RNA sequence: GGGAACGACUCGAGUAGAGUCGAAAACAGGACGUUAGCAUAGGUCCAAUUUACUAUGCAGAUUGCAUCGUCGGAGACGACGUAGAGACCGCCACAGCAGGGUCGAUGACCUGCUGAAUUACACCUCUUCUCAUAGCGAGGGAUCAAGCUAUGUACAGAUAGCUAGUAGGUUCGCCUACUAGCUAUCAAAAGAAACAACAACAACAAC
Reactivity to 2A3 in 0.01 (KOAc 150mM, MgCl2 10mM, bicine 150mM(pH8.5), 24C), signal-to-noise 3, nucleotides 027 to 156: c030a030g040g040a020c030g050u110u120a000g000c010a040u020a050g040g000u030c070c000a020a000u070u040u040a050c020u010a010u010g010c020a030g070a220u170u260g040c030a110u070c000g010u000c000g020g040a050g000a040c030g000a000c000g010u030a030g030a000g020a080c000c050g030c070c060a020c030a020g000c000a000g090g000g030u130c070g100a110u160g090a060c000c000u000g000c000u000g010a010a040u100u050a020c040a040c060c040u010c000u090u050c070u020c020a000u000a010g000c010g000a020g050g030g010a020u130c060a000a050g000c000u010a010u020g050u010a030c000a020
Reactivity to DMS in 0.01 (KOAc 150mM, MgCl2 10mM, bicine 150mM(pH8.5), 24C), signal-to-noise 2, nucleotides 027 to 156: c020a150g000g020a070c050g000u000u020a140g030c020a060u010a050g000g000u000c080c070a060a100u000u000u000a050c020u010a000u000g010c010a200g000a110u010u000g010c060a120u010c040g050u000c030g010g010a250g010a250c010g020a020c000g050u000a080g010a160g000a060c030c030g020c080c070a150c000a010g020c030a010g000g000g000u010c060g020a180u000g020a120c000c010u000g000c010u000g020a050a030u010u000a060c070a090c020c020u000c020u000u010c040u010c010a030u000a010g000c000g010a080g010g010g020a100u000c070a000a140g020c000u000a010u000g010u020a070c080a140
About this RNA:
This 207-nucleotide RNA was probed chemically with 2A3 and DMS. For 2A3 the reverse transcriptase was SuperScript II with manganese. For DMS the reverse transcriptase was MarathonRT. For DMS, 5,030 sequencing reads were counted. Source: RMDB library OK3TST, as collected in RNAgym. Reactivities are given for positions 27 through 156.